[RMDB]
RNA sequence: GGGAACGACUCGAGUAGAGUCGAAAAGAUAUGGAACCAUUAGGGAGGUUGGUGUCGGAAACGACACCCAACCGACGAUCUAAGGUUCCUAAGUCAAAACCAGGAGUGCCUUCGGGCACUCCUGGAAUCAUGCUUAAAAGUUCGCUUUUAAGCAUGAAAAAGAAACAACAACAACAAC
Reactivity to 2A3 in 0.01 (KOAc 150mM, MgCl2 10mM, bicine 150mM(pH8.5), 24C), signal-to-noise 3, nucleotides 027 to 126: g010a000u020a010u080g000g000a010a000c040c030a200u020u040a030g020g000g000a020g010g010u000u010g010g020u000g000u010c000g020g000a010a000a000c010g000a000c000a000c010c020c010a010a010c020c000g050a050c010g000a000u000c000u010a030a020g020g000u000u000c000c000u010a000a000g010u010c010a010a050a060a180c010c010a000g010g020a010g030u120g010c030c090u260u300c300g030g010g000c000a010c010u000c000c000u000g000g000a000a000
Reactivity to DMS in 0.01 (KOAc 150mM, MgCl2 10mM, bicine 150mM(pH8.5), 24C), signal-to-noise 5, nucleotides 027 to 126: g000a010u000a000u020g000g000a010a010c010c000a100u000u000a000g010g000g000a000g040g010u000u000g000g020u010g010u000c000g010g010a000a000a010c000g000a010c010a000c300c300c300a010a000c010c000g000a070c220g010a020u000c010u010a020a030g000g010u000u000c000c010u000a000a030g000u010c010a130a080a150a200c010c010a020g000g000a040g040u000g000c000c010u000u000c240g030g010g020c000a000c000u000c000c000u000g000g010a030a030